Structure probing data (2A3 and DMS) for a 177-nucleotide construct. Values are in units of 0.01, from 0 to 300, in steps of 10. High 2A3 reactivity points to a flexible backbone, as in loops and unpaired stretches. The 2A3 profile rests on 1,714 reads. For DMS the reverse transcriptase was MarathonRT. The reactions ran in a buffer of 150 mM KOAc, 10 mM MgCl2 and 150 mM bicine (pH 8.5), at 24 C.

RNA sequence: GGGAACGACUCGAGUAGAGUCGAAAAGCACAGGGCAAGAUCAUCUACGCCUGCGUGACCUACAUUCUCCUGACCCUGGUCUACACCUUCGUUAACGUGCCGUACUGCGCCAUGCCGGGCGUCAUCACAUCAUCUGUUGCUUCGGCAACAGAUGAUGAAAAGAAACAACAACAACAAC
Reactivity to 2A3 in 0.01 (KOAc 150mM, MgCl2 10mM, bicine 150mM(pH8.5), 24C), signal-to-noise 2, nucleotides 027 to 126: g040c000a010c030a060g000g000g010c000a010a040g020a180u200c030a030u040c110u080a020c070g020c010c000u010g010c080g050u050g030a080c000c000u050a040c050a150u090u000c050u050c020c020u050g050a070c020c000c000u040g000g050u000c010u050a040c030a100c030c010u100u090c040g090u060u080a110a020c070g010u040g060c050c020g050u060a080c080u080g030c030g020c060c010a070u120g080c010c020g000g030g010c020g010u030c020a030u150c020a010
Reactivity to DMS in 0.01 (KOAc 150mM, MgCl2 10mM, bicine 150mM(pH8.5), 24C), signal-to-noise 2, nucleotides 027 to 126: g020c050a050c030a290g010g000g000c030a070a040g000a100u000c150a130u000c020u000a060c120g020c010c010u010g010c100g020u010g000a040c030c020u000a080c120a150u020u000c030u000c020c010u000g010a100c060c020c040u000g000g000u010c020u000a040c120a100c070c020u000u000c040g010u000u000a110a100c120g010u000g000c010c040g000u010a080c090u000g000c080g020c000c040a060u000g060c010c040g010g010g000c040g010u000c100a070u030c140a140